[RMDB]
RNA sequence: GGGAACGACUCGAGUAGAGUCGAAAAGGUUAGCAGUCAAGUUUCUCUGCUUUCACUGCUCGCUCGCUCUCUCCUGCAAUGAUUGAUGAUCACUCCGUGGAUAGAGAGGCACACUGUCAGAGGUGACCUCAAUGAGGCGGUUCGCCGCCUCAUUGAGAAAAGAAACAACAACAACAAC
Reactivity to 2A3 in 0.01 (KOAc 150mM, MgCl2 10mM, bicine 150mM(pH8.5), 24C), signal-to-noise 1, nucleotides 027 to 126: g020g030u000u050a000g030c000a000g030u060c080a150a200g000u010u170u010c060u000c000u030g040c000u000u000u020c150a150c070u000g000c000u020c020g030c000u020c020g050c010u020c020u000c000u020c010c040u010g000c030a040a080u080g030a060u040u180g110a160u110g010a020u050c000a020c090u020c000c000g090u040g050g000a030u040a050g030a000g030a020g060g000c030a010c000a010c050u060g010u110c010a020g010a010g210g000u050g000a100c020
Reactivity to DMS in 0.01 (KOAc 150mM, MgCl2 10mM, bicine 150mM(pH8.5), 24C), signal-to-noise 2, nucleotides 027 to 126: g010g010u110u000a040g010c000a020g010u000c090a040a100g020u010u000u000c060u000c090u000g030c000u000u010u000c020a090c020u010g000c110u000c080g030c150u000c050g000c000u000c020u000c010u000c060c050u000g020c150a080a080u010g000a080u000u010g040a160u000g000a130u010c020a030c040u000c070c050g010u000g000g000a070u000a030g010a050g010a070g000g000c070a060c090a050c050u000g020u000c170a140g020a110g000g000u000g020a170c090